[RMDB]
RNA sequence: GGGAACGACUCGAGUAGAGUCGAAAAUUGAAGGCUAAGGAAGUAACUGUGAUGUGUCCCGCGUUUAGUAUACCAAGAAAUAUAUCAGCGUAUGAAGGUCUAUGCUUUAGUGUCACUACAUCUAAAGAUCAUUGUGCCACAGAUAAUGAUUGGUUAAAAGAGAUCGGAAUUUCGAUUCCGAUCUCUUAAAAGAAACAACAACAACAAC
Reactivity to 2A3 in 0.01 (KOAc 150mM, MgCl2 10mM, bicine 150mM(pH8.5), 24C), signal-to-noise 2, nucleotides 027 to 156: u050u080g030a070a000g060g000c020u120a030a010g030g030a040a040g040u050a020a110c090u040g050u080g090a110u060g050u020g030u000c040c010c000g010c030g000u010u040u070a080g010u050a040u030a180c020c030a040a010g000a110a210a040u070a020u050a010u110c060a000g130c020g110u050a070u140g140a110a030g070g020u030c040u030a080u060g000c050u020u000u040a010g010u000g070u060c060a010c110u080a030c050a100u060c030u040a050a020a000g010a030u120c010a020u020u130g040u090g020c000c000a070c030a070g030a060u060a010a040u050g050a020u020u010g000g000u040u060a070a190
Reactivity to DMS in 0.01 (KOAc 150mM, MgCl2 10mM, bicine 150mM(pH8.5), 24C), signal-to-noise 2, nucleotides 027 to 156: u010u000g010a080a080g020g070c020u000a090a060g000g030a080a210g010u010a040a080c030u010g010u010g000a110u000g110u000g020u000c030c020c000g030c060g010u000u010u000a060g010u010a080u000a060c040c030a110a170g000a120a090a080u010a080u000a040u000c060a060g000c050g030u020a060u000g010a130a050g030g030u000c040u020a070u000g010c010u000u000u000a060g050u000g000u010c130a130c120u010a090c040a050u000c040u000a060a050a070g010a030u000c020a050u000u000g000u000g020c030c040a070c000a050g000a080u000a040a080u000g030a150u020u000g010g010u000u000a050a090